[RMDB]
RNA sequence: GGGAACGACUCGAGUAGAGUCGAAAAGAAAAGAGCGUAAUCGCGUCUUGACGUGAGUGAGACUAGACUGUAGACUAUCCCAAGUGGGAUAGCAUAACUCACAAUACGCUGAUCUACAGUCAAAAGAGGUCAGCAUAGGAUUCGUCCUAUGCUGACCAAAAGAAACAACAACAACAAC
Reactivity to DMS in 0.01 (KOAc 150mM, MgCl2 10mM, bicine 150mM(pH8.5), 24C), signal-to-noise 1, nucleotides 027 to 126: g000a090a160a000a100g000a120g020c020g070u020a000a300u000c000g000c000g000u010c000u000u000g000a000c000g010u010g000a020g010u000g000a000g070a300c300u000a020g020a010c020u000g030u010a010g000a080c000u000a000u000c000c000c000a300a050g090u000g000g000g000a000u240a000g000c130a050u040a000a140c000u000c000a000c020a040a220u000a050c050g100c000u020g000a250u030c000u000a000c000a000g000u010c010a050a130a040a030g000a110
Reactivity to 2A3 in 0.01 (KOAc 150mM, MgCl2 10mM, bicine 150mM(pH8.5), 24C), signal-to-noise 2, nucleotides 027 to 126: g190a000a070a020a020g020a000g000c000g030u000a010a050u010c000g010c000g000u030c100u070u210g090a000c000g010u040g010a020g000u000g000a010g000a010c030u000a070g020a010c030u020g000u000a000g000a000c000u000a000u000c030c000c000a130a040g300u300g050g000g000a000u000a000g000c000a020u020a010a050c000u000c010a000c000a000a030u040a020c010g000c010u000g000a000u010c000u000a000c000a000g000u020c010a010a000a000a060g100a040